The record gives the reactivity of an RNA of 177 nucleotides to 2A3 and DMS.
[RMDB]
RNA sequence: GGGAACGACUCGAGUAGAGUCGAAAAGAUAUGGAAUACCUUCGAUAAGUCCACACUCGGAAACGAGUGCCGGACUUUUGACGAAGGUUCCUAAGUCAAAACUGUCUAACGUUCGCGUUAGACAGAAGGGUAUAUUAAUGUUCGCAUUAAUAUACCCAAAAGAAACAACAACAACAAC
Reactivity to 2A3 in 0.01 (KOAc 150mM, MgCl2 10mM, bicine 150mM(pH8.5), 24C), signal-to-noise 4, nucleotides 027 to 126: g010a020u090a040u110g030g000a040a070u130a290c000c000u010u000c010g060a060u020a120a000g000u010c010c000a010c000a000c000u000c000g010g030a090a080a060c010g020a000g010u030g000c080c020g000g000a010c000u010u010u010u020g030a020c010g000a000a010g000g000u000u000c000c000u010a060a000g060u030c050a000a020a150a210c010u010g000u010c000u000a000a000c000g020u040u060c300g010c000g170u000u000a000g010a000c000a000g000a000a030
Reactivity to DMS in 0.01 (KOAc 150mM, MgCl2 10mM, bicine 150mM(pH8.5), 24C), signal-to-noise 7, nucleotides 027 to 126: g010a030u010a300u000g000g000a020a050u000a050c010c000u000u000c000g010a150u000a010a020g010u000c000c000a280c000a000c000u000c000g000g000a090a090a190c000g010a010g000u000g010c140c150g030g000a010c000u000u000u000u000g010a190c140g000a020a010g000g010u000u000c000c000u000a060a140g010u010c040a070a070a090a180c010u000g000u000c000u000a000a010c000g010u000u020c220g020c010g010u000u000a020g000a010c000a000g000a040a060
Source: RMDB library TTRDEL, as collected in RNAgym. Values are in units of 0.01, from 0 to 300, in steps of 10.